[RMDB]
RNA sequence: GGGAACGACUCGAGUAGAGUCGAAAAGUAUUGAAUUUGCCUUUCUCUACGCUUCAUUGGGUAGUGAAGUGACUAUCUUACAAGGGGUGGAUAGGAUCUUGGAAAUCUUUGACACUGAGGUAUCAGAUCAAUAAAUAACGUUCGCGUUAUUUAUUGAAAAAGAAACAACAACAACAAC
Reactivity to DMS in 0.01 (KOAc 150mM, MgCl2 10mM, bicine 150mM(pH8.5), 24C), signal-to-noise 9, nucleotides 027 to 126: g010u000a050u010u010g010a090a080u010u000u000g010c030c020u000u010u010c010u000c010u000a060c050g010c020u000u010c230a100u000u010g000g010g020u000a040g010u000g010a030a040g010u000g010a110c060u000a040u010c040u000u010a070c110a120a090g010g000g010g020u000g000g000a140u000a030g000g000a040u000c030u000u010g000g000a080a080a050u000c020u000u000u000g010a240c080a060c040u000g010a080g010g020u000a060u000c060a060g010a220
Reactivity to 2A3 in 0.01 (KOAc 150mM, MgCl2 10mM, bicine 150mM(pH8.5), 24C), signal-to-noise 3, nucleotides 027 to 126: g050u040a090u130u170g070a140a110u100u080u140g020c010c000u020u070u010c020u000c010u030a030c040g040c090u030u020c050a120u180u210g140g040g000u050a020g010u020g050a050a020g020u010g010a010c010u040a050u080c010u040u120a050c050a110a100g060g030g030g000u040g020g000a010u020a050g030g010a020u020c030u050u080g080g030a050a100a040u030c010u050u050u050g030a040c030a000c050u040g020a030g060g040u050a060u120c020a010g030a100
Record summary:
Structure probing data (DMS and 2A3) for a 177-nucleotide construct. The DMS profile rests on 19,468 reads. Reactivities are given for positions 27 through 126.